[RMDB]
RNA sequence: GGGAACGACUCGAGUAGAGUCGAAAAAUCCACAAUUAGGUAUUUUAGCAGACGUAAGUCGAUAUUAUCCGAAGACAUAUACGAAUACAGAUCGAAAUCAUUUAUAUUCGACUUGAGUUUGUUAGAGGAAUUCGAAUAGCUGGAUAUCAGUAGAUGCCGAUAAUGACGGUUUCGACCGUCAUUAUCGAAAAGAAACAACAACAACAAC
Reactivity to DMS in 0.01 (KOAc 150mM, MgCl2 10mM, bicine 150mM(pH8.5), 24C), signal-to-noise 2, nucleotides 027 to 156: a110u000c020c030a120c120a120a110u000u010a080g060g030u000a050u000u000u000u000a010g010c030a050g010a020c020g000u020a050a080g010u000c000g000a100u010a070u000u010a080u000c020c070g020a300a160g000a170c080a000u000a110u000a180c020g030a080a090u020a230c070a160g000a040u000c020g010a070a070a150u000c050a070u010u010u010a070u000a110u040u000c000g010a070c020u000u010g010a210g020u000u000u000g040u000u010a080g000a150g000g010a040a220u010u000c040g020a120a080u010a050g000c020u000g000g020a080u010a040u000c020a080g010u000a060g020a120u010g000c130
Reactivity to 2A3 in 0.01 (KOAc 150mM, MgCl2 10mM, bicine 150mM(pH8.5), 24C), signal-to-noise 3, nucleotides 027 to 156: a000u050c050c000a120c080a080a090u150u110a050g090g010u050a090u010u060u020u090a030g010c020a010g000a110c100g110u180a050a060g020u000c010g000a000u000a080u050u060a020u020c090c030g020a030a020g070a020c030a040u270a000u080a120c060g040a100a020u170a160c080a030g160a140u030c020g040a010a040a030u070c030a000u040u190u270a050u070a040u060u110c000g000a000c000u000u030g000a000g060u010u040u040g010u010u020a010g000a010g030g030a050a060u110u040c010g030a050a030u040a160g000c050u020g000g090a070u080a040u160c020a020g060u080a040g020a040u060g090c050

Structure probing data (DMS and 2A3) for a 207-nucleotide construct. 2A3 adducts were read by reverse transcription with SuperScript II with manganese. The 2A3 profile rests on 910 reads. The data come from the RNA Mapping Database (RMDB), library OK3TST. Conditions: 150 mM KOAc, 10 mM MgCl2 and 150 mM bicine (pH 8.5), 24 C. The DMS profile rests on 2,228 reads. Values cover nucleotides 27 to 156.